[RMDB]
RNA sequence: GGGAACGACUCGAGUAGAGUCGAAAACGCACUCUGCAUCGCCUAACAGCAUUUCCUAUGUGCUGUUAACGCGAUUCAACCUUAAUAGGAUAUGCUAAACACUGCCGUUUGAAGUCUGUUUAGAAGAAACUUAAUCAAGCUAGCAUCAUGUUGGUUGGAUAUACAAACGCUUCGGCGUUUGUAUAUCAAAAGAAACAACAACAACAAC
Reactivity to 2A3 in 0.01 (KOAc 150mM, MgCl2 10mM, bicine 150mM(pH8.5), 24C), signal-to-noise 2, nucleotides 027 to 156: c070g030c030a120c070u220c110u220g040c020a040u010c010g020c010c000u000a010a000c000a000g000c000a000u160u000u000c000c000u010a000u040g000u000g000c000u010g000u010u010a030a020c050g000c010g020a000u100u080c050a060a110c000c040u130u290a020a000u010a010g020g000a010u010a020u030g000c000u000a010a000a000c010a000c020u010g020c010c050g010u000u000u020g010a020a010g010u000c040u030g020u020u020u010a000g020a030a000g000a040a140a010c120u270u170a060a030u070c000a080a000g020c000u090a020g100c070a090u080c070a140u150g030u060u020g130g050u040u040g120